[RMDB]
RNA sequence: GGGAACGACUCGAGUAGAGUCGAAAAGAUAUGGAGUGAAGAGACAUGAAGAAUCGGAAACGAUACUUCAACAGCUCUCACUCCUAAGUCAAACCUGGUACUCAACGUUCGCGUUGAGUACCAGGAAGACUUAACAACGGUUCGCCGUUGUUAAGUCAAAAGAAACAACAACAACAAC
Reactivity to DMS in 0.01 (KOAc 150mM, MgCl2 10mM, bicine 150mM(pH8.5), 24C), signal-to-noise 2, nucleotides 027 to 126: g010a060u000a300u000g000g010a010g000u000g010a080a050g010a010g000a020c090a210u020g000a000a000g010a190a010u010c010g000g020a100a040a110c010g010a020u000a060c000u020u000c010a020a080c300a180g010c010u010c000u000c010a010c000u010c010c010u000a000a060g000u010c000a120a120a150c000c010u000g000g000u000a000c000u000c000a030a000c020g020u000u000c260g030c010g040u010u000g000a010g010u000a000c000c000a000g000g010a030a080
Reactivity to 2A3 in 0.01 (KOAc 150mM, MgCl2 10mM, bicine 150mM(pH8.5), 24C), signal-to-noise 3, nucleotides 027 to 126: g020a020u040a010u150g030g020a010g000u010g030a300a200g020a090g020a090c070a190u080g010a010a000g020a050a020u020c000g000g000a030a030a020c010g000a010u040a090c000u000u020c010a130a140c090a140g000c010u000c000u000c000a000c000u000c000c000u000a030a010g030u000c020a060a030a110c000c000u010g000g040u020a010c000u000c000a000a000c000g030u120u070c300g030c000g190u020u010g000a000g000u000a000c000c000a000g000g000a000a000
Background: This 177-nucleotide RNA was probed chemically with DMS and 2A3. Values cover nucleotides 27 to 126. High DMS reactivity at an A or C suggests that its Watson-Crick edge is free. For DMS the reverse transcriptase was MarathonRT. 2A3 adducts were read by reverse transcription with SuperScript II with manganese.